[RMDB]
RNA sequence: GGGAACGACUCGAGUAGAGUCGAAAAUAAAAUAGCGUACUAGAGACGCUGAUCUCUAGAUAACUACGAACUCUAGAGAUACGGUCCAAUUGAAUACAAGGACAGUUGGACGUAUUCGUAGAAAAAACGACUCUUACUUGUUCGCAAGUAAGAGUCGAAAAGAAACAACAACAACAAC
Reactivity to DMS in 0.01 (KOAc 150mM, MgCl2 10mM, bicine 150mM(pH8.5), 24C), signal-to-noise 1, nucleotides 027 to 126: u000a020a050a100a100u060a040g040c000g000u000a170c030u000a040g030a060g020a040c010g020c010u000g000a080u000c000u020c010u010a050g000a070u000a010a100c060u000a000c010g000a050a170c220u000c010u000a010g000a180g000a070u010a000c100g010g040u000c000c000a010a010u000u010g020a060a100u020a160c250a070a130g000g010a270c020a000g010u000u000g000g010a060c020g000u000a040u000u000c010g000u000a010g010a000a050a060a020a110a050
Reactivity to 2A3 in 0.01 (KOAc 150mM, MgCl2 10mM, bicine 150mM(pH8.5), 24C), signal-to-noise 1, nucleotides 027 to 126: u140a000a050a010a040u180a020g000c010g030u000a040c010u020a020g040a030g000a020c000g020c040u020g070a150u000c010u010c000u000a000g020a120u140a090a110c010u010a000c010g030a030a020c010u010c020u050a030g020a000g030a110u040a090c050g040g070u000c010c000a010a000u000u030g010a070a060u240a290c100a090a060g090g090a020c000a020g030u010u000g000g000a000c000g010u000a070u040u020c010g040u000a020g030a040a110a010a000a020a010